[RMDB]
RNA sequence: GGGAACGACUCGAGUAGAGUCGAAAACGUGCCUGUGCGCAACUUUAUUUGGCUGUGUCCCAUGAGUACUCCCAAAUGAAGUAGAGAUUGAAGAGGAACCGGCAUCAUAAUUUAAUCACGCACUGUGUCUAGCUUGGGGCUUCGGUCCCAGGCUAGAAAAAGAAACAACAACAACAAC
Reactivity to DMS in 0.01 (KOAc 150mM, MgCl2 10mM, bicine 150mM(pH8.5), 24C), signal-to-noise 3, nucleotides 027 to 126: c120g040u010g020c040c000u000g010u000g010c010g000c110a180a010c010u000u010u000a040u000u000u000g000g000c080u010g010u000g010u010c020c000c210a220u050g000a120g000u010a080c040u010c280c000c000a000a000a070u020g000a020a050g030u010a060g000a080g010a110u000u000g010a010a010g010a030g000g000a020a010c010c000g000g000c020a020u000c000a010u010a000a010u000u010u020a010a090u000c140a300c000g000c070a110c070u020g000u000g000
Reactivity to 2A3 in 0.01 (KOAc 150mM, MgCl2 10mM, bicine 150mM(pH8.5), 24C), signal-to-noise 2, nucleotides 027 to 126: c020g020u030g030c010c010u040g000u020g030c020g000c010a030a000c000u010u020u010a000u000u000u000g020g000c020u010g010u010g020u030c000c000c000a030u070g020a010g000u020a020c000u000c000c000c000a000a000a000u030g000a010a000g010u030a010g000a000g000a050u020u030g010a000a000g010a000g010g000a000a000c000c000g010g000c000a000u000c000a000u000a030a000u000u000u010a050a030u070c000a000c020g010c000a010c050u090g040u020g030
Background: An RNA of 177 nucleotides, treated with DMS and 2A3 and read out base by base. Source: RMDB library OK1LIB, as collected in RNAgym. For 2A3, 4,581 sequencing reads were counted. The RNA was probed in 150 mM KOAc, 10 mM MgCl2 and 150 mM bicine (pH 8.5) at 24 C.